[RMDB]
RNA sequence: GGGAACGACUCGAGUAGAGUCGAAAAUCAUCGUUCUUCGGAACGAUGAAGUAUAACGCGGGCUCCGGACACAGGCGUAGCUGGCCUGGGAUAGUCACACUAUGGGGCAAACUUUCGAGUUUGCCAAGGACACUAGUUUGUUCGCAAACUAGUGUCCAAAAGAAACAACAACAACAAC
Reactivity to DMS in 0.01 (KOAc 150mM, MgCl2 10mM, bicine 150mM(pH8.5), 24C), signal-to-noise 2, nucleotides 027 to 126: u000c000a020u010c010g020u000u000c000u000u000c150g020g000a000a000c000g000a000u000g000a000a110g010u000a060u000a050a130c100g000c090g000g030g000c030u000c010c020g040g000a080c100a120c060a030g000g010c020g010u010a100g000c070u010g030g000c020c020u020g010g010g010a120u000a040g010u000c030a110c110a280c060u000a040u010g010g000g010g030c000a000a010a020c010u010u000u000c170g010a040g000u000u000u000g000c000c010a020a060

Chemical mapping of a 177-nucleotide RNA with DMS. DMS adducts were read by reverse transcription with MarathonRT.